[RMDB]
RNA sequence: GGGAACGACUCGAGUAGAGUCGAAAAGUCGAGCCCACCGACCAGGGCGCACGAGUGACGAUGAGCAUCGCCAGCAACUACAAAAUCCCCGUCGAUGCCUCGGCGAACGUGCAUUCGGUGUCAGCGGUAAUAUGGCAUUAUUCGUAAUGCCAUAUUAAAAAGAAACAACAACAACAAC
Reactivity to DMS in 0.01 (KOAc 150mM, MgCl2 10mM, bicine 150mM(pH8.5), 24C), signal-to-noise 9, nucleotides 027 to 126: g010u000c030g010a100g010c020c010c000a180c100c050g010a050c030c040a140g010g010g010c090g010c010a020c020g010a080g020u010g000a040c020g010a040u010g010a160g020c020a020u000c010g010c100c060a100g010c110a060a050c110u010a180c220a070a060a090a130u010c040c040c020c070g010u000c020g010a030u000g010c020c010u000c020g000g000c010g000a040a050c020g010u000g010c010a050u000u000c020g010g020u010g010u000c030a090g010c090g000g000
Reactivity to 2A3 in 0.01 (KOAc 150mM, MgCl2 10mM, bicine 150mM(pH8.5), 24C), signal-to-noise 9, nucleotides 027 to 126: g020u020c020g010a020g030c010c010c010a020c010c030g030a030c020c040a100g030g040g020c020g000c010a040c020g010a030g030u070g020a020c010g030a060u080g030a020g020c010a010u010c010g020c020c020a010g060c040a090a080c060u300a120c150a070a200a040a190u120c010c010c000c010g030u030c000g010a000u010g010c010c010u010c020g000g000c010g010a050a040c010g000u040g030c010a010u030u030c020g020g010u070g030u050c020a020g050c020g040g010
Chemical mapping of a 177-nucleotide RNA with DMS and 2A3.
The RNA was probed in 150 mM KOAc, 10 mM MgCl2 and 150 mM bicine (pH 8.5) at 24 C.
The 2A3 profile rests on 28,929 reads.
For 2A3 the reverse transcriptase was SuperScript II with manganese.
For DMS the reverse transcriptase was MarathonRT.